[RMDB]
Chemical mapping of a 177-nucleotide RNA with DMS and 2A3. DMS adducts were read by reverse transcription with MarathonRT. The data come from the RNA Mapping Database (RMDB), library OK2TRN. Conditions: 150 mM KOAc, 10 mM MgCl2 and 150 mM bicine (pH 8.5), 24 C.
RNA sequence: GGGAACGACUCGAGUAGAGUCGAAAACGACAUUAACCACAUGUCGCGUCGCCGAUCCGCUUAAGAGGCUCUUUAAACUAGGUAAACCACUACCCGCGGAGGACACGCAAGAUGAAGACAGAAGACGAUCCAUGGUUACGUUCGCGUAACCAUGGAUAAAAGAAACAACAACAACAAC
Reactivity to DMS in 0.01 (KOAc 150mM, MgCl2 10mM, bicine 150mM(pH8.5), 24C), signal-to-noise 2, nucleotides 027 to 126: c030g010a030c000a030u000u000a100a130c170c290a140c120a040u000g010u000c000g040c050g010u000c080g060c040c010g000a070u000c010c030g020c050u000u020a100a060g010a080g000g050c050u000c080u000u000u010a040a060a080c100u000a050g020g000u000a080a060a110c040c120a120c130u000a100c060c070c030g000c050g010g040a050g000g020a050c070a120c020g010c060a070a040g000a030u010g020a070a030g000a050c040a070g020a070a070g000a070c120g020
Reactivity to 2A3 in 0.01 (KOAc 150mM, MgCl2 10mM, bicine 150mM(pH8.5), 24C), signal-to-noise 2, nucleotides 027 to 126: c010g000a000c020a010u080u060a110a090c000c000a000c020a170u060g000u020c000g000c030g090u040c050g000c040c000g040a090u050c020c010g060c040u100u040a110a020g020a050g030g000c000u000c000u110u150u040a220a220a080c080u100a050g090g000u040a070a040a060c000c000a030c020u010a020c050c030c040g000c020g040g010a030g000g030a040c020a010c020g020c020a000a010g080a150u150g060a020a010g030a060c060a040g080a100a010g070a060c050g010